[RMDB]
RNA sequence: GGGAACGACUCGAGUAGAGUCGAAAAACGGCUACGUACGCGUAGCCGAAUAGACAGAGCCUUGCGUGUGCUCUUAUUGGUAGUGUGACUGAUAAUCUAUCAUAAGACACACGCGGCUCUGUCUGAACGUUCUAGCGGAGUUCGCUCCGCUAGAACGAAAAGAAACAACAACAACAAC
Reactivity to DMS in 0.01 (KOAc 150mM, MgCl2 10mM, bicine 150mM(pH8.5), 24C), signal-to-noise 1, nucleotides 027 to 126: a090c000g010g000c000u000a050c030g020u100a080c230g160c000g090u000a000g000c000c010g000a030a080u000a010g000a010c000a000g000a000g050c030c000u040u010g020c070g120u000g010u000g000c190u000c040u020u010a000u010u010g000g060u000a000g010u030g000u070g000a300c300u020g000a110u040a150a160u030c000u000a030u000c010a010u000a000a030g000a020c000a000c000a050c040g030c000g020g000c010u000c000u000g000u000c060u000g000a010a100
Reactivity to 2A3 in 0.01 (KOAc 150mM, MgCl2 10mM, bicine 150mM(pH8.5), 24C), signal-to-noise 4, nucleotides 027 to 126: a000c000g000g000c000u000a000c020g070u050a030c280g000c000g110u000a000g000c000c000g000a000a010u050a000g000a000c000a010g000a000g000c000c040u120u300g000c040g010u000g000u000g030c070u000c000u000u000a070u060u180g040g000u000a010g010u050g100u110g210a100c120u090g090a220u080a250a100u110c010u000a000u000c000a000u000a000a010g020a010c000a000c000a000c000g000c010g000g000c000u000c000u000g000u010c000u000g000a000a000

The record gives the reactivity of an RNA of 177 nucleotides to DMS and 2A3. For DMS the reverse transcriptase was MarathonRT. In probing experiments dimethyl sulfate is read out at A N1 and C N3, which are open when not base-paired. For 2A3 the reverse transcriptase was SuperScript II with manganese.